[RMDB]
RNA sequence: GGGAACGACUCGAGUAGAGUCGAAAAGGGGUCAGAAGACAAGUCAGCUCACGUAAACUUGGAUUUAGGCUGCUGAAGCCUCCACGGCAGCCUUGUCAGUUUACAAGAGCUGUCACCCUUCUGACGGAGGCACCCAAAACUAGCUUUCGAGCUAGAAUUACUACAGAAACUUCGGUUUCUGUAGUAAAAAAGAAACAACAACAACAAC
Reactivity to 2A3 in 0.01 (KOAc 150mM, MgCl2 10mM, bicine 150mM(pH8.5), 24C), signal-to-noise 2, nucleotides 027 to 156: g100g000g030g000u010c000a000g000a010a000g020a030c060a050a170g010u020c000a010g000c000u000c010a050c120g000u010a010a010a020c030u140u300g170g000a050u180u230u230a000g000g000c000u000g000c010u010g000a110a030g010c030c040u030c020c020a040c010g000g000c000a000g000c000c000u000u000g000u010c020a050g000u000u000u000a020c020a010a090g030a000g000c000u000g010u010c000a010c020c010c000u000u000c000u010g010a000c030g000g020a010g000g030c040a070c000c020c000a000a040a000a060c000u000a000g030c010u100u090u160c300g100a010g000c000u020a010g000a000a020
Reactivity to DMS in 0.01 (KOAc 150mM, MgCl2 10mM, bicine 150mM(pH8.5), 24C), signal-to-noise 1, nucleotides 027 to 156: g000g040g050g000u000c000a070g000a050a090g010a060c090a090a110g000u010c010a050g000c010u000c030a170c300g010u000a030a020a050c010u010u010g060g010a070u010u010u000a000g030g030c010u010g000c040u000g010a040a080g050c130c050u000c010c050a300c040g010g000c010a040g010c010c010u010u000g000u000c020a000g030u000u010u000a060c040a110a300g000a040g000c000u010g000u000c020a090c060c050c010u000u000c010u010g000a040c010g030g030a060g070g040c040a120c000c030c010a050a070a080a220c030u000a010g000c000u000u000u000c250g010a020g060c020u010a000g000a190a190
An RNA of 207 nucleotides, treated with 2A3 and DMS and read out base by base. The 2A3 profile rests on 1,538 reads. Conditions: 150 mM KOAc, 10 mM MgCl2 and 150 mM bicine (pH 8.5), 24 C. For DMS the reverse transcriptase was MarathonRT. High DMS reactivity at an A or C suggests that its Watson-Crick edge is free.